The record gives the reactivity of an RNA of 177 nucleotides to DMS and 2A3. For DMS, 1,166 sequencing reads were counted. It was measured as part of the RMDB library OK1LIB.
[RMDB]
RNA sequence: GGGAACGACUCGAGUAGAGUCGAAAAGAAAGAAAGAAAGAGAAAACCAUGGUAUGGUUGGUCUUUGAGAGGCAGAAGAUCAACAGCUGCCAUCAGCAUCUAGGAAAAACUGUCUAAUCUCAAAUAACUCGCCAUAUCAUUUCGAUGAUAUGGCGAGAAAAGAAACAACAACAACAAC
Reactivity to DMS in 0.01 (KOAc 150mM, MgCl2 10mM, bicine 150mM(pH8.5), 24C), signal-to-noise 1, nucleotides 027 to 126: g020a140a020a060g000a020a080a000g000a110a300a070g000a110g000a060a080a060a100c070c080a000u000g000g000u080a270u000g010g080u010u000g010g000u010c010u000u000u000g000a060g020a020g000g000c100a210g010a000a010g000a160u000c100a070a050c040a030g000c060u000g000c020c040a030u040c110a060g000c120a070u040c110u000a100g030g000a060a030a050a250a070c030u000g000u000c000u000a080a130u000c000u010c090a060a000a070u060a110a070
Reactivity to 2A3 in 0.01 (KOAc 150mM, MgCl2 10mM, bicine 150mM(pH8.5), 24C), signal-to-noise 2, nucleotides 027 to 126: g080a040a030a000g120a000a080a000g100a070a060a000g120a000g020a000a160a000a000c000c080a010u000g030g050u140a090u180g050g000u040u050g000g010u000c000u000u000u040g080a170g000a050g110g000c100a070g000a080a000g020a000u000c040a010a020c030a010g040c000u060g000c010c040a010u080c000a050g000c010a040u000c030u130a040g010g100a040a070a000a000a000c030u000g010u000c010u040a020a180u040c010u000c030a100a110a030u120a080a080